[RMDB]
RNA sequence: GGGAACGACUCGAGUAGAGUCGAAAAGCGGGUGGCGCCAGGUCGGCGGGCGCGGGUGGCGCCAGGUCGGCGGACGCGGGUGCCAGAUCGGCGGGUGGCGCCAGUUCGGCGGGAGCUGCCGGGAGGGGAGUCUUACUUGUUUCGACAAGUAAGACUCAAAAGAAACAACAACAACAAC
Reactivity to 2A3 in 0.01 (KOAc 150mM, MgCl2 10mM, bicine 150mM(pH8.5), 24C), signal-to-noise 1, nucleotides 027 to 126: g060c070g000g020g000u030g010g010c000g010c000c020a010g020g100u030c020g000g020c030g000g040g000c030g030c000g040g130g100u220g170g000c030g030c010c000a040g050g030u040c040g010g070c010g040g030a030c030g000c090g120g040g030u040g040c010c000a050g040a210u100c030g000g010c030g010g030g060u050g030g010c000g020c000c010a000g040u190u150c040g020g000c040g010g080g000a090g090c050u060g000c020c040g000g000g030a140g030g020g000
Reactivity to DMS in 0.01 (KOAc 150mM, MgCl2 10mM, bicine 150mM(pH8.5), 24C), signal-to-noise 1, nucleotides 027 to 126: g030c080g030g000g000u000g010g020c020g030c030c030a090g010g020u000c010g040g000c020g010g000g010c020g020c040g010g000g010u000g010g030c030g010c000c000a030g020g050u000c050g010g010c040g000g000a110c120g010c090g000g020g010u000g020c050c050a100g000a050u000c070g010g020c020g010g000g000u000g020g010c030g010c010c000a080g020u000u010c110g000g000c030g000g000g020a180g010c090u000g020c030c020g000g000g000a160g000g000g000
Structure probing data (2A3 and DMS) for a 177-nucleotide construct. Values cover nucleotides 27 to 126. High 2A3 reactivity points to a flexible backbone, as in loops and unpaired stretches. Conditions: 150 mM KOAc, 10 mM MgCl2 and 150 mM bicine (pH 8.5), 24 C. For DMS the reverse transcriptase was MarathonRT.